[RMDB]
RNA sequence: GGGAACGACUCGAGUAGAGUCGAAAACUUUUGCUUCCUUCUCGCUGGCUGACUCGAGGACGCGACCGGUGGUACACCAAGAGGUCUCCACCUCCUAGGGUACUUUUUUCUAACACCGAUUCCGUACCGAGCGCCGGAGAGUGAAGCGCCCAGGGCUGACUUAUAGUCCGUUCGCGGACUAUAAGUCAAAAGAAACAACAACAACAAC
Reactivity to 2A3 in 0.01 (KOAc 150mM, MgCl2 10mM, bicine 150mM(pH8.5), 24C), signal-to-noise 3, nucleotides 027 to 156: c030u150u110u190u300g000c000u020u000c000c010u130u130c010u030c030g210c130u240g000g000c010u050g080a300c000u080c020g050a190g030g020a010c010g040c110g020a030c000c050g000g010u030g010g030u010a030c150a120c070c000a030a010g000a020g030g020u050c160u050c130c080a020c000c000u000c000c020u030a110g030g000g000u010a010c000u090u040u050u030u060u100c140u110a110a030c010a000c000c000g050a060u130u030c010c000g010u000a040c000c000g010a010g010c010g000c010c000g000g010a010g000a000g000u110g000a010a000g010c010g040c000c000c010a010g070g090g050c070u030